Chemical mapping of a 177-nucleotide RNA with DMS and 2A3. It was measured as part of the RMDB libraries RFM100 and RFMREP. The RNA was probed in 150 mM KOAc, 10 mM MgCl2 and 150 mM bicine (pH 8.5) at 24 C. DMS adducts were read by reverse transcription with MarathonRT. For 2A3 the reverse transcriptase was SuperScript II with manganese.
[RMDB]
RNA sequence: GGGAACGACUCGAGUAGAGUCGAAAAAACCACUUAUCUUAUCCCAGAACUGCUCCUACCACAAUAUAAGGGGUAAAAAAUGGUUUUUAGUUUGUGAGGUCAUGUGGAUUUUUCACCAAGAUUCAAGACCAAUACGUACUUUCGAGUACGUAUUGGUAAAAGAAACAACAACAACAAC
Reactivity to DMS in 0.01 (KOAc 150mM, MgCl2 10mM, bicine 150mM(pH8.5), 24C), signal-to-noise 6, nucleotides 027 to 126: a020a020c010c000a010c060u010u010a040u020c080u000u010a080u010c030c000c010a140g000a130a110c160u010g000c040u000c020c030u000a140c110c110a140c170a080a080u010a080u020a120a070g010g000g000g020u000a000a010a050a060a070a060u010g000g000u010u000u000u000u010a100g000u010u010u010g010u010g010a030g000g020u000c070a070u000g010u010g000g000a050u010u000u020u010u010c080a080c040c070a050a070g000a050u010u010c050a030a060g000
Reactivity to 2A3 in 0.01 (KOAc 150mM, MgCl2 10mM, bicine 150mM(pH8.5), 24C), signal-to-noise 7, nucleotides 027 to 126: a000a000c030c010a030c020u070u060a050u050c010u040u030a040u120c010c000c010a000g050a040a020c050u040g010c010u020c010c000u040a090c050c060a120c080a230a020u100a020u120a290a090g000g000g000g030u100a060a010a010a010a010a060u110g030g020u120u030u030u040u060a120g060u060u100u140g080u030g020a020g010g010u030c070a060u100g030u030g080g010a110u030u020u010u020u080c070a130c040c020a030a030g030a100u110u090c030a050a020g030